[RMDB]
RNA sequence: GGGAACGACUCGAGUAGAGUCGAAAACCAACCGCCUUCGGGCGGUUGGGAUGACACUCGCGAGGAAAGUCCGGGCUGACUGUCCACGACAGAACCCGGCUUAAAUCUAUCGCUUCGGCGAUAGAAACUGACAUAUAUUAUUCGUAAUAUAUGUCAGAAAAGAAACAACAACAACAAC
Reactivity to 2A3 in 0.01 (KOAc 150mM, MgCl2 10mM, bicine 150mM(pH8.5), 24C), signal-to-noise 4, nucleotides 027 to 126: c000c000a000a000c010c010g050c000c020u080u090c250g150g000g000c000g000g000u000u000g000g010g000a030u060g010a000c010a000c020u010c010g040c030g050a040g010g100a200a030a010g060u080c030c000g000g000g000c050u090g090a190c000u010g010u050c060c160a150c300g040a000c010a000g020a030a020c000c000c000g030g000c000u000u020a010a020a010u000c000u000a000u010c000g000c000u010u040c220g110g010c000g000a000u000a010g000a030a010a010
Reactivity to DMS in 0.01 (KOAc 150mM, MgCl2 10mM, bicine 150mM(pH8.5), 24C), signal-to-noise 7, nucleotides 027 to 126: c000c000a010a010c010c000g020c000c000u000u010c200g040g020g030c000g010g000u000u000g000g000g000a030u000g000a300c290a030c010u000c010g010c020g010a040g010g010a110a060a020g000u010c010c010g000g000g000c070u010g010a070c010u000g000u000c010c160a150c190g010a020c000a010g010a140a120c000c000c000g000g010c020u010u000a020a070a120u000c000u000a000u000c000g010c000u000u020c190g030g010c000g010a010u000a000g000a020a070a150